[RMDB]
RNA sequence: GGGAACGACUCGAGUAGAGUCGAAAAGAUUAAGCCAUGCACGUGUAAGUACGCACGGCCGGUACAGUGAAACUGCGAAUGGCUCAUUAAAUCAGUUAUGGUUCCUUUGAUCGCUCCAUCUGUUACUUGGAUAACUGUGGUAAUUCUAGAGCUAAUACCAGACUAUUAUCUUCGGAUAAUAGUCUGGAAAAGAAACAACAACAACAAC
Reactivity to 2A3 in 0.01 (KOAc 150mM, MgCl2 10mM, bicine 150mM(pH8.5), 24C), signal-to-noise 4, nucleotides 027 to 156: g020a020u080u120a050a010g010c000c020a040u090g000c040a070c240g020u020g000u050a200a210g110u170a060c060g000c030a020c010g000g000c010c020g040g030u080a060c030a020g010u030g160a120a090a060c010u010g020c040g030a090a020u030g010g000c000u020c040a020u040u120a040a070a070u070c020a010g040u060u090a070u130g040g000u020u060c000c000u060u070u080g080a100u080c030g010c040u000c000c020a120u030c040u030g030u050u010a030c030u070u130g070g000a110u070a130a040c020u040g040u060g100g000u040a010a100u100u070c030u080a040g020a020g030c040u080a030a070u080a100
Reactivity to DMS in 0.01 (KOAc 150mM, MgCl2 10mM, bicine 150mM(pH8.5), 24C), signal-to-noise 1, nucleotides 027 to 156: g010a150u010u000a070a080g020c070c000a020u010g020c030a080c040g000u000g020u010a130a170g030u000a100c090g040c000a030c040g040g020c010c000g030g010u010a000c060a080g000u000g020a080a100a170c020u000g030c040g000a070a090u000g010g020c000u010c030a100u000u000a080a070a120u000c010a050g010u000u000a050u000g020g030u000u000c030c010u000u010u020g010a090u010c060g010c020u020c010c000a040u000c020u010g010u000u000a040c030u000u000g010g030a160u000a080a100c070u000g030u000g020g000u000a010a030u000u000c010u010a090g000a040g010c000u020a030a200u000a180